[RMDB]
RNA sequence: GGGAACGACUCGAGUAGAGUCGAAAACUAGGUAGGAUAACUGCAAGGACAGAAAACGAAGGGCGUGACAAUUUUGUCUCAUUCCGAGAUGCUACGAAGUGGUAUGGUAGGGAUGAUGUAGUUGCGCUAGUAUGCUGUUCUUCGGAACAGCAUACUAAAAAGAAACAACAACAACAAC
Reactivity to DMS in 0.01 (KOAc 150mM, MgCl2 10mM, bicine 150mM(pH8.5), 24C), signal-to-noise 3, nucleotides 027 to 126: c020u010a070g000g040u010a040g000g020a130u000a090a110c040u000g010c070a070a090g000g010a040c060a080g000a040a040a060a100c130g000a110a090g010g020g000c010g020u000g000a010c010a100a120u000u000u000u010g000u000c080u010c010a030u010u000c010c010g010a190g010a040u000g010c000u010a020c010g020a130a150g040u000g000g020u000a000u000g030g000u000a150g000g000g000a010u000g010a030u010g010u000a130g000u000u000g010c000g000c020
Reactivity to 2A3 in 0.01 (KOAc 150mM, MgCl2 10mM, bicine 150mM(pH8.5), 24C), signal-to-noise 2, nucleotides 027 to 126: c030u020a020g050g080u060a020g050g070a150u110a250a090c020u050g000c050a070a080g060g010a040c020a030g060a080a100a030a030c100g040a130a050g140g000g000c010g000u000g000a010c020a080a110u110u090u060u190g060u000c010u000c010a020u000u000c000c000g030a050g000a020u020g010c010u010a020c040g250a300a090g030u020g040g000u020a000u010g000g200u040a020g000g000g000a020u030g000a030u060g050u050a020g000u000u020g020c000g000c000
Notes: This 177-nucleotide RNA was probed chemically with DMS and 2A3. For 2A3 the reverse transcriptase was SuperScript II with manganese. Conditions: 150 mM KOAc, 10 mM MgCl2 and 150 mM bicine (pH 8.5), 24 C.